RNA sequence: GGGAACGACUCGAGUAGAGUCGAAAAGAGAGGCCUCUUCCUAGGUCCGGAGUCUACCUCCAUCUGGUCUGUUCGGGCCCUCUUCGCCGGGGGGGCUCCUUCCCCAUCCUUAUCCUUCUUUCCAAGACUACUUGAUACUUCGGUAUCAAGAAAAGAAACAACAACAACAAC
Reactivity to 2A3 in 0.01 (KOAc 150mM, MgCl2 10mM, bicine 150mM(pH8.5), 24C), signal-to-noise 9, nucleotides 027 to 129: g110a000g020a050g010g050c010c010u040c020u080u050c010c010u030a040g010g020u000c050c040g020g010a020g020u030c070u120a100c030c010u030c020c000a050u020c060u070g020g040u020c030u030g100u080u130c060g010g000g000c000c000c000u020c020u070u050c060g040c040c030g000g000g000g000g000g000g000c010u040c000c000u030u040c010c000c000c010a050u060c010c010u050u090a070u080c010c000u050u050c000u040u060u010c030c010a080a040g070a060c030u100a040
Reactivity to DMS in 0.01 (KOAc 150mM, MgCl2 10mM, bicine 150mM(pH8.5), 24C), signal-to-noise 9, nucleotides 027 to 129: g040a050g030a120g020g040c040c020u010c030u010u010c040c030u030a110g000g030u010c010c090g050g010a050g040u040c100u050a200c100c000u010c020c030a100u000c070u040g000g000u020c030u000g050u050u040c150g000g000g000c000c000c000u000c020u020u020c110g000c060c050g030g020g020g020g020g010g010c030u040c000c020u040u000c020c020c010c030a080u020c020c010u030u050a050u020c020c020u030u040c050u020u020u020c020c020a110a090g030a090c120u070a080